[RMDB]
RNA sequence: GGGAACGACUCGAGUAGAGUCGAAAAGAAGAGAAUACCGGUGUAAGUGCAGCCCGUCUUACACCGUAAGGCACAGCGGAAACGCUGAUGUAAAAUACAGGGCUGAGAGACGGAAGUAGACCGUCAACGUGGCAUAUGAUUUCGAUCAUAUGCCACGAAAAGAAACAACAACAACAAC
Reactivity to DMS in 0.01 (KOAc 150mM, MgCl2 10mM, bicine 150mM(pH8.5), 24C), signal-to-noise 2, nucleotides 027 to 126: g010a170a120g000a070g010a050a190u060a090c080c010g020g040u000g000u000a010a010g000u000g000c000a020g030c000c000c000g060u000c000u000u000a000c010a000c000c040g010u000a030a040g000g000c000a070c100a000g000c010g000g000a140a050a060c000g040c000u000g000a060u000g010u000a070a060a030a060u110a020c070a140g000g000g000c030u000g020a150g040a120g000a010c000g010g000a140a050g020u020a080g000a120c010c000g030u000c000a060a130
Reactivity to 2A3 in 0.01 (KOAc 150mM, MgCl2 10mM, bicine 150mM(pH8.5), 24C), signal-to-noise 5, nucleotides 027 to 126: g130a010a010g100a010g070a090a060u130a100c030c010g000g000u000g000u010a000a030g010u020g130c040a000g000c000c000c000g000u010c000u000u000a000c000a000c000c000g000u050a030a080g110g020c020a000c000a010g000c020g030g020a050a060a020c030g000c000u000g010a040u000g010u050a040a110a010a000u210a050c090a090g000g000g000c000u010g010a030g000a010g000a030c000g030g000a160a040g060u180a030g070a100c000c000g000u000c000a010a010
An RNA of 177 nucleotides, treated with DMS and 2A3 and read out base by base. Source: RMDB library OK1LIB, as collected in RNAgym. Conditions: 150 mM KOAc, 10 mM MgCl2 and 150 mM bicine (pH 8.5), 24 C.